This 177-nucleotide RNA was probed chemically with 2A3 and DMS.
Conditions: 150 mM KOAc, 10 mM MgCl2 and 150 mM bicine (pH 8.5), 24 C.
For 2A3, 7,324 sequencing reads were counted.
The DMS profile rests on 4,666 reads.

[RMDB]
RNA sequence: GGGAACGACUCGAGUAGAGUCGAAAAGAUAUGGAGUACAGGACCUGCUUUACCAUCGAUCUCGGAAACGAGGGAGGUAAAGACCCAGGCUGUACUCCUAAGUCAAACGUUGGCUUCGGCCAACGAACUAGUAAAGGCAGUUCGCUGCCUUUACUAGAAAAGAAACAACAACAACAAC
Reactivity to 2A3 in 0.01 (KOAc 150mM, MgCl2 10mM, bicine 150mM(pH8.5), 24C), signal-to-noise 3, nucleotides 027 to 126: g010a010u080a040u190g020g000a000g000u010a000c000a010g080g180a130c010c000u010g010c000u040u010u010a010c000c020a190u300c050g030a090u040c010u000c020g000g040a100a070a030c010g020a010g030g010g010a030g000g000u000a020a010a020g020a020c120c080c010a010g030g000c010u000g000u010a000c000u000c000c000u010a010a000g000u010c030a070a040a120c010g000u000u010g000g000c020u050u080c300g130g000c000c010a000a000c000g000a020a030
Reactivity to DMS in 0.01 (KOAc 150mM, MgCl2 10mM, bicine 150mM(pH8.5), 24C), signal-to-noise 4, nucleotides 027 to 126: g010a020u000a300u000g000g000a000g000u000a020c010a000g020g010a140c000c010u000g010c010u000u000u000a000c010c000a300u000c230g000a050u010c010u010c010g000g000a110a070a140c000g000a030g000g000g010a020g020g000u010a000a000a010g010a120c200c240c130a010g000g000c010u000g000u000a010c000u000c000c000u000a000a060g000u010c050a110a090a200c020g020u000u010g000g000c000u000u020c190g020g000c000c000a000a000c000g000a060a110